[RMDB]
RNA sequence: GGGAACGACUCGAGUAGAGUCGAAAAAGGACGCGAGGUUGUCGCCCCCCGACUCAAUGAACAGCAGUUCGAGGCCGGGAAACUCGCCUUGCAGCGCCUCGACGGUUUCCUGAUUGAGCGAACUGUCAUAUUUACAUAUCUUCGGAUAUGUAAAUAUAAAAGAAACAACAACAACAAC
Reactivity to 2A3 in 0.01 (KOAc 150mM, MgCl2 10mM, bicine 150mM(pH8.5), 24C), signal-to-noise 5, nucleotides 027 to 126: a020g060g000a030c040g020c050g080a070g130g080u170u110g070u100c020g020c000c000c020c010c000c010g060a060c020u020c110a040a200u120g040a090a020c020a030g050c010a010g010u000u000c010g010a020g030g050c040c010g030g000g000a010a000a010c110u160c060g020c000c020u030u040g010c100a190g160c040g010c100c010u030c020g020a020c000g000g000u010u010u010c010c000u020g030a110u080u060g030a030g050c020g000a010a010c010u010g010u050c020
Reactivity to DMS in 0.01 (KOAc 150mM, MgCl2 10mM, bicine 150mM(pH8.5), 24C), signal-to-noise 9, nucleotides 027 to 126: a080g010g010a050c070g010c040g010a070g030g010u010u000g010u000c020g010c020c020c020c020c020c020g010a100c100u010c110a100a100u010g000a080a080c160a160g000c040a030g010u000u000c000g010a080g000g010c100c020g000g010g000a020a020a030c020u010c060g010c020c010u000u000g010c030a150g020c250g000c120c010u000c060g010a020c020g000g000u000u000u000c020c010u000g000a060u000u000g010a080g000c020g000a020a020c020u000g000u000c100

Conditions: 150 mM KOAc, 10 mM MgCl2 and 150 mM bicine (pH 8.5), 24 C. Chemical mapping of a 177-nucleotide RNA with 2A3 and DMS. For 2A3 the reverse transcriptase was SuperScript II with manganese. Values cover nucleotides 27 to 126.